[RMDB]
RNA sequence: GGGAACGACUCGAGUAGAGUCGAAAAGCCGUGGUGCGUCCCGAAAACUGUUUGGCAAAAACCACCACGCCGGCGGCGGCCGCUCCAAUGGCCAGGCAGCUGGGAAGCCGCGACCAUAAUUCGGUGGCGUAUUAUUACCCUUCGGGGUAAUAAUACGAAAAGAAACAACAACAACAAC
Reactivity to 2A3 in 0.01 (KOAc 150mM, MgCl2 10mM, bicine 150mM(pH8.5), 24C), signal-to-noise 2, nucleotides 027 to 126: g010c020c000g050u040g060g000u050g040c040g030u040c000c000c000g020a120a090a020a030c050u070g060u100u040u090g030g000c010a020a020a070a070a080c000c000a000c000c010a040c030g030c020c010g060g000c070g030g000c010g030g040c000c050g060c010u040c000c000a020a140u150g060g000c020c000a010g050g000c010a010g000c060u190g000g000g040a020a030g060c020c000g040c030g040a060c000c010a100u060a220a120u300u120c060g000g060u050g020g030
Reactivity to DMS in 0.01 (KOAc 150mM, MgCl2 10mM, bicine 150mM(pH8.5), 24C), signal-to-noise 3, nucleotides 027 to 126: g000c090c030g060u010g020g020u010g030c070g010u000c000c000c010g000a060a070a090a130c070u000g010u000u000u000g030g030c070a080a080a110a110a110c060c020a020c020c010a090c070g010c040c050g000g020c070g000g010c060g000g020c030c010g020c120u000c080c120a090a100u010g000g000c030c030a080g020g000c040a030g030c100u000g010g020g000a100a110g010c030c000g000c020g000a090c030c040a070u010a080a100u000u010c090g000g030u000g000g000